[RMDB]
RNA sequence: GGGAACGACUCGAGUAGAGUCGAAAAGCCAGUACGCGCGUCUUGCCGAUCGAAGGUAAACGUAUUUACAUGAAAUUUUUCAAUCGUGCAUACGAAAAAUAUCGGUCCGACGCGACCGCCGCGCAAAUUGCCUGGCAAGCCGUCAAGCGUAAAUACAUGUGUGUGAGUAUUUCGAUACUCACACACAAAAAGAAACAACAACAACAAC
Reactivity to 2A3 in 0.01 (KOAc 150mM, MgCl2 10mM, bicine 150mM(pH8.5), 24C), signal-to-noise 2, nucleotides 027 to 156: g060c030c000a010g050u030a020c020g010c000g000c000g000u000c000u020u010g000c000c000g070a270u200c180g180a210a090g000g000u080a020a040a020c020g020u020a060u000u130u040a020c020a020u000g030a130a190a200u110u140u020u020u300c120a090a120u060c040g030u000g030c010a000u040a030c010g040a100a000a000a000a000u150a030u120c020g000g030u010c010c020g170a080c060g180c110g000a000c000c010g080c010c010g080c020g000c000a030a080a050u050u130g000c020c020u010g000g000c010a030a010g020c000c000g010u040c060a090a060g020c000g040u080a000a130a000u230a130c090a090